[RMDB]
RNA sequence: GGGAACGACUCGAGUAGAGUCGAAAACGUUCAGAAAUACUUGACCACGAGGGCUCCCCUAUAGUCUGCUUUGGCGGUGCGGCAGGCCCCGUGCGAUAGGCUAACUGCGGUAUUCCCCGCACUCCGUUUUGAAAGCACCUUUCGAGGUGCUUUCAAAAAAAGAAACAACAACAACAAC
Reactivity to DMS in 0.01 (KOAc 150mM, MgCl2 10mM, bicine 150mM(pH8.5), 24C), signal-to-noise 2, nucleotides 027 to 126: c040g030u010u000c010a000g040a050a130a080u000a100c090u000u000g000a300c300c000a050c000g050a170g050g000g000c000u000c080c300c000c000u000a000u030a180g000u170c020u000g050c000u010u140u000g000g050c000g000g000u050g000c180g000g000c130a260g000g000c030c000c000c000g010u040g000c000g000a230u000a000g000g080c100u000a000a040c040u000g000c090g010g010u000a140u010u000c100c120c000c100g000c090a100c030u050c000c010g000u050
Reactivity to 2A3 in 0.01 (KOAc 150mM, MgCl2 10mM, bicine 150mM(pH8.5), 24C), signal-to-noise 2, nucleotides 027 to 126: c010g030u090u090c040a040g100a070a120a020u200a110c000u030u040g000a000c010c000a020c010g030a300g000g000g000c000u130c040c060c000c000u030a040u050a190g140u020c040u000g060c030u090u090u230g110g000c030g000g040u050g020c030g010g040c000a070g020g000c030c000c000c000g000u000g000c030g010a020u010a010g020g010c070u040a110a000c030u050g040c020g000g000u010a070u020u090c000c010c000c000g050c000a010c010u000c010c010g020u030
This 177-nucleotide RNA was probed chemically with DMS and 2A3.
Reactivities are given for positions 27 through 126.
It was measured as part of the RMDB library RFM100.
For DMS, 689 sequencing reads were counted.
The 2A3 profile rests on 833 reads.